An RNA of 170 nucleotides, treated with 2A3 and DMS and read out base by base. DMS adducts were read by reverse transcription with MarathonRT. DMS (dimethyl sulfate) methylates the pairing face of unpaired adenines and cytosines. The RNA was probed in 150 mM KOAc, 10 mM MgCl2 and 150 mM bicine (pH 8.5) at 24 C. The data come from the RNA Mapping Database (RMDB), library 15KLIB.
RNA sequence: GGGAACGACUCGAGUAGAGUCGAAAACCCUUCAGCGAACAUGAAGCGCACUGAGCCGCCAGGAUGAGUCCAUAGCGAUAGGAGGGGAUGCUAGGAGUCGGCGGCGACCGAAGCGAGGGGGAAAGUAUGAUCACAAGGUUCGCCUUGUGAAAAAGAAACAACAACAACAAC
Reactivity to 2A3 in 0.01 (KOAc 150mM, MgCl2 10mM, bicine 150mM(pH8.5), 24C), signal-to-noise 9, nucleotides 027 to 129: c000c000c000u040u080c050a040g000c010g020a020a020c020a090u090g050a060a010g030c030g000c030a030c070u050g030a010g020c020c010g020c010c020a040g090g030a100u140g050a020g070u010c020c020a160u090a040g030c030g100a080u090a090g020g030a040g000g010g000g010a010u080g010c020u030a020g020g010a040g050u050c040g000g000c010g010g000c020g010a020c010c000g010a030a010g020c020g020a030g000g000g000g000g000a010a010a010g080u110a070u240g080a080
Reactivity to DMS in 0.01 (KOAc 150mM, MgCl2 10mM, bicine 150mM(pH8.5), 24C), signal-to-noise 9, nucleotides 027 to 129: c000c020c040u010u040c080a090g040c050g020a010a030c080a080u040g010a060a050g020c300g020c050a090c090u030g020a110g010c000c030g010c040c090a140g020g010a100u010g020a080g030u030c000c040a060u000a050g020c040g020a090u020a040g000g000a050g020g010g010g020a060u020g030c060u030a020g010g010a030g010u000c070g020g010c060g020g030c060g020a010c050c010g000a110a050g030c120g000a050g020g000g000g010g000a030a040a030g020u030a050u050g000a160